[RMDB]
Structure probing data (2A3) for a 207-nucleotide construct. Values cover nucleotides 27 to 156. 2A3 adducts were read by reverse transcription with SuperScript II with manganese.
RNA sequence: GGGAACGACUCGAGUAGAGUCGAAAAUUGACCGCAGUGCAUAAUACACUUGGCUUUGCUUUAUUAACAUGCUUUUUAAAAUGAUGUUUUCAGGGAGCCAGCAUUUCACACCAGAAGAGGAGCCCUUAAUUUCCUUGGGGGCCAGCUGGCAGGUGCACCCUACUCGUCAUUUCGAUGACGAGUAGGGAAAAGAAACAACAACAACAAC
Reactivity to 2A3 in 0.01 (KOAc 150mM, MgCl2 10mM, bicine 150mM(pH8.5), 24C), signal-to-noise 2, nucleotides 027 to 156: u010u010g120a040c030c030g010c000a000g120u000g030c020a100u090a110a130u100a300c030a010c040u060u040g010g000c000u010u070u080g050c000u230u300u200a120u230u060a020a060c020a070u070g100c050u080u110u020u070u170a030a170a040a130u150g020a000u020g020u040u050u030u100c030a040g000g020g000a020g010c000c000a000g000c020a030u060u120u180c050a040c020a020c070c000a070g020a070a030g080a150g100g000a060g020c010c000c000u010u020a120a120u090u130u110c040c050u070u040g010g000g020g010g000c010c000a000g000c000u000g010g010c020a010g010g040u010g010c000a020